[RMDB]
RNA sequence: GGGAACGACUCGAGUAGAGUCGAAAAAAAAGAUAUGGAACUAGAACUACCACGACGUUGCCAAUGACGCUGUUUCGGAAACGAAACAGUAAGACAGGCAACCAAGUGGCUAGUUCCUAAGUCAAAACGUUACUUUGAACUUCGGUUCAAAGUAACGAAAAGAAACAACAACAACAAC
Reactivity to DMS in 0.01 (KOAc 150mM, MgCl2 10mM, bicine 150mM(pH8.5), 24C), signal-to-noise 2, nucleotides 027 to 126: a100a030a050a070g000a030u000a300u000g000g030a030a000c000u000a050g000a090a040c050u010a300c030c000a000c010g010a300c300g020u000u000g010c000c000a250a080u020g020a190c300g020c020u010g050u000u020u000c000g000g030a030a020a110c010g000a010a010a000c000a000g000u000a020a050g000a110c150a080g000g020c010a000a000c000c000a020a240g060u000g000g000c000u000a010g030u000u000c010c000u010a000a120g000u000c000a090a080a040a130
Reactivity to 2A3 in 0.01 (KOAc 150mM, MgCl2 10mM, bicine 150mM(pH8.5), 24C), signal-to-noise 1, nucleotides 027 to 126: a010a000a000a020g000a000u030a040u050g020g010a000a000c000u000a000g010a050a040c110u180a080c300c000a000c000g010a000c020g010u000u000g000c030c030a300a300u150g010a020c070g000c030u010g060u000u020u010c000g000g020a030a020a030c030g000a000a000a000c010a010g010u010a000a010g100a080c060a060g000g000c000a000a000c010c000a040a050g000u000g000g030c010u000a000g010u010u010c000c000u000a030a000g040u030c030a000a010a070a120
Structure probing data (DMS and 2A3) for a 177-nucleotide construct.
For 2A3, 2,656 sequencing reads were counted.
Reactivities are given for positions 27 through 126.
For DMS the reverse transcriptase was MarathonRT.
The data come from the RNA Mapping Database (RMDB), library TTRDES.